[RMDB]
RNA sequence: GGGAACGACUCGAGUAGAGUCGAAAAGUAGAGUGUAUCAUGUCAGUAAGCAUGCCGGGGAAUGGUGGUUUACCCCGUUAUCAAAUGAUUACCGACCAAUAAUUGGCGAAACUCGUUUCGCCUUGGCAAAGUCACGGCGUGUUCGCACGCCGUGAAACUCGGGAAUUACGUUCGCGUAAUUCCCGAGAAAAGAAACAACAACAACAAC
Reactivity to 2A3 in 0.01 (KOAc 150mM, MgCl2 10mM, bicine 150mM(pH8.5), 24C), signal-to-noise 2, nucleotides 027 to 156: g080u100a000g020a000g030u060g030u070a020u100c030a040u100g100u110c060a020g060u150a140a000g010c000a010u030g070c010c010g000g010g010g000a010a000u080g030g000u040g030g010u050u040u080a070c020c000c000c010g020u060u000a050u020c010a000a040a040u150g030a000u060u050a010c010c020g070a160c020c180a020a020u180a140a180u070u130g010g000c000g010a000a040a010c080u120c090g060u000u000u000c000g040c000c000u000u010g030g000c000a090a070a000g020u020c000a000c020g020g000c000g000u000g000u020u030c090g010c190a000c000g000c040c040g000u010g000a000a000a000

An RNA of 207 nucleotides, treated with 2A3 and read out base by base. The data come from the RNA Mapping Database (RMDB), library M2RFPK. For 2A3, 755 sequencing reads were counted. Values cover nucleotides 27 to 156. Conditions: 150 mM KOAc, 10 mM MgCl2 and 150 mM bicine (pH 8.5), 24 C.